[RMDB]
RNA sequence: GGGAACGACUCGAGUAGAGUCGAAAACGGGUUCCAGCGAUUCUCGUGCCUCAGCCUCCCGAGUAGCUGGGACUAUGGGCAUGAGCCACCACGCCUGGCUAAUUUUUUUUGUAUUAGUAGAGACAGUGUUUCACCAUGUUGGCCAGGCUGGUCUCGACCUUCAACUAACUUUCGAGUUAGUUGAAGGAAAAGAAACAACAACAACAAC
Reactivity to DMS in 0.01 (KOAc 150mM, MgCl2 10mM, bicine 150mM(pH8.5), 24C), signal-to-noise 1, nucleotides 027 to 156: c070g000g000g000u000u000c020c010a000g030c040g030a180u000u000c000u010c000g020u000g010c030c010u000c140a120g020c020c000u010c020c010c030g000a090g020u000a140g020c010u000g000g000g010a020c020u010a030u000g010g010g030c040a090u000g000a190g020c050c000a040c000c000a040c070g000c010c000u000g020g000c000u000a000a000u000u000u000u000u010u000u000u010g010u000a180u070u000a110g010u000a120g000a110g000a040c040a100g030u010g010u000u000u010c040a090c000c000a040u000g030u010u010g010g000c030c000a050g030g000c030u000g020g010u010c000u000c010g010a300
Reactivity to 2A3 in 0.01 (KOAc 150mM, MgCl2 10mM, bicine 150mM(pH8.5), 24C), signal-to-noise 3, nucleotides 027 to 156: c050g030g020g000u050u030c020c030a040g020c020g080a110u240u010c010u020c010g040u030g100c030c080u280c110a140g050c050c080u040c030c060c000g000a010g000u090a030g020c020u100g000g000g010a000c010u020a130u180g010g000g000c050a030u120g010a000g050c030c020a000c000c000a030c070g000c000c020u000g000g000c000u000a010a010u030u060u060u020u050u040u070u150g120u080a160u130u100a160g070u020a060g030a000g030a030c090a100g120u060g030u170u080u080c020a030c030c030a020u130g020u050u020g020g000c000c000a000g010g030c020u000g000g000u000c010u000c000g030a010